[RMDB]
RNA sequence: GGGAACGACUCGAGUAGAGUCGAAAACGCAGGCUCAGAUCGUGGAUCGUCUGCGCGGCGAGCUCCUUGCCGGUGCCCGAUUCACCCAUCAGCAGCACGGACGCCUCGGUGCCCGCGACGCGGCCGACUGAUUUAUAUGAUUCGUCAUAUAAAUCAGAAAAGAAACAACAACAACAAC
Reactivity to 2A3 in 0.01 (KOAc 150mM, MgCl2 10mM, bicine 150mM(pH8.5), 24C), signal-to-noise 9, nucleotides 027 to 126: c040g010c030a040g040g030c020u050c120a050g020a120u070c060g110u100g060g030a030u030c010g030u050c090u080g000c030g010c010g020g000c010g000a030g020c100u110c070c030u040u050g010c000c000g060g080u080g010c000c020c010g010a040u060u050c020a040c010c040c010a060u050c020a020g060c010a000g020c030a020c070g030g020a010c030g020c000c010u040c030g040g040u080g070c010c020c010g030c020g030a020c030g010c010g020g020c000c010g030a020
Reactivity to DMS in 0.01 (KOAc 150mM, MgCl2 10mM, bicine 150mM(pH8.5), 24C), signal-to-noise 9, nucleotides 027 to 126: c070g010c060a050g010g000c020u000c130a130g010a040u010c140g020u010g010g010a040u000c030g010u000c050u000g010c040g010c020g000g000c020g000a070g010c140u010c100c030u000u010g020c030c020g010g020u010g010c010c240c020g000a080u000u000c050a060c030c030c060a070u000c060a060g020c070a070g010c050a100c040g000g000a050c060g010c030c030u000c050g010g010u000g010c030c020c010g000c030g010a050c120g010c060g000g000c020c030g010a190